Description
Structure probing data (DMS and 2A3) for a 207-nucleotide construct. The RNA was probed in 150 mM KOAc, 10 mM MgCl2 and 150 mM bicine (pH 8.5) at 24 C. For DMS, 6,172 sequencing reads were counted. For 2A3 the reverse transcriptase was SuperScript II with manganese.
[RMDB]
RNA sequence: GGGAACGACUCGAGUAGAGUCGAAAAUGGUCGACGUCCAGCUCCCUCGGGACCACGCUGCUCUGGGCGGAAGAGUCUUCUGACACUUCUAGCCUAUUCAGCUUCGCGUCCUUGAGGCCUGGCGUAACGCGGCUCUUGCCACCUGGCUGCCUCCGCUAUCUUAUUAGAAGUUCGCUUCUAAUAAGAUAAAAGAAACAACAACAACAAC
Reactivity to DMS in 0.01 (KOAc 150mM, MgCl2 10mM, bicine 150mM(pH8.5), 24C), signal-to-noise 2, nucleotides 027 to 156: u010g010g020u000c000g010a030c040g040u000c010c020a040g090c000u010c060c020c000u030c000g020g010g010a040c030c030a080c170g030c040u010g000c030u000c020u000g020g000g000c010g000g000a030a020g040a110g030u000c010u000u000c300u000g030a040c010a160c010u000u010c010u000a070g040c000c000u010a020u010u000c010a030g000c010u010u010c040g020c080g020u010c010c030u000u030g020a000g020g010c120c000u010g010g030c040g010u010a060a100c050g010c060g010g030c020u000c130u020u000g010c040c020a150c060c040u010g030g020c040u010g010c010c020u000c020c000g010c300u000
Reactivity to 2A3 in 0.01 (KOAc 150mM, MgCl2 10mM, bicine 150mM(pH8.5), 24C), signal-to-noise 6, nucleotides 027 to 156: u170g040g020u070c040g040a050c010g080u110c010c010a010g000c040u290c040c000c000u010c010g010g000g000a000c000c010a030c080g000c000u000g000c000u000c000u010g010g000g010c000g010g000a000a000g040a010g010u010c010u280u150c220u300g030a010c020a020c030u010u000c010u060a180g000c000c000u000a010u070u080c000a000g000c000u030u080c110g010c070g000u000c010c000u080u300g010a000g000g000c010c000u000g020g000c000g000u010a030a010c040g000c010g030g010c010u030c040u110u120g030c020c010a120c060c080u090g020g000c020u030g000c010c010u050c030c000g010c030u010